[RMDB]
RNA sequence: GGGAACGACUCGAGUAGAGUCGAAAAGAGUCUUCUGACUUUUCUAGCCUAUUCAGCUUCGCGUCCUUGAGGCCUGGCGUAACGCGGCUCUUGCCACCAGGAAGCCUCCGCUAGUCGAGCGGACUUGGUCUCUAUCCGCCCAAAGCCCUUUUUCUCUUCUUCUAUAUCACUUCGGUGAUAUAGAAGAAAAAGAAACAACAACAACAAC
Reactivity to 2A3 in 0.01 (KOAc 150mM, MgCl2 10mM, bicine 150mM(pH8.5), 24C), signal-to-noise 2, nucleotides 027 to 156: g010a000g010u040c050u210u190c210u300g060a080c040u020u020u040u070c070u070a040g000c010c000u050a080u110u060c060a020g040c040u040u050c050g030c060g070u030c030c000u000u130g030a010g000g000c010c010u010g040g000c040g040u130a160a000c080g010c030g070g000c010u020c010u050u090g030c050c000a060c020c010a000g030g070a150a010g020c000c030u010c010c000g010c010u050a110g140u190c100g080a010g000c010g000g010a010c020u050u090g030g010u040c010u000c000u050a070u080c060c050g050c010c010c010a040a050a030g030c000c020c000u050u170u000u060u010c000u020c000u010